[RMDB]
RNA sequence: GGGAACGACUCGAGUAGAGUCGAAAAGGCGGCCGAGGUAGACUACUCCACGCAACCCGACAAAUACGAUUUUGGGACAGACGACGCCUCGAAGGGCUUAGUCUGGCAUAUCGCCCCGACAUACCGACAGGCGUUCCGCCACGGCUACGAAAAGACGCUAUGAAGGCCAAUUCGUUGGCCUUCAUAGAAAAGAAACAACAACAACAAC
Reactivity to 2A3 in 0.01 (KOAc 150mM, MgCl2 10mM, bicine 150mM(pH8.5), 24C), signal-to-noise 1, nucleotides 027 to 156: g080g020c050g000g000c060c020g040a050g000g050u100a040g010a100c000u040a100c000u020c060c060a050c030g040c010a040a130c000c000c000g090a060c100a060a190a120u230a160c120g090a160u120u030u140u210g070g000g000a080c010a040g000a000c010g000a040c090g000c010c000u020c010g190a190a190g040g000g060c000u050u070a020g000u090c000u000g000g000c000a050u160a060u060c040g030c000c000c000c000g000a010c010a070u110a030c010c020g040a070c110a110g000g030c040g050u140u000c060c060g010c000c000a000c000g010g000c050u050a050c070g060a060a020a020a020g130a010c020g000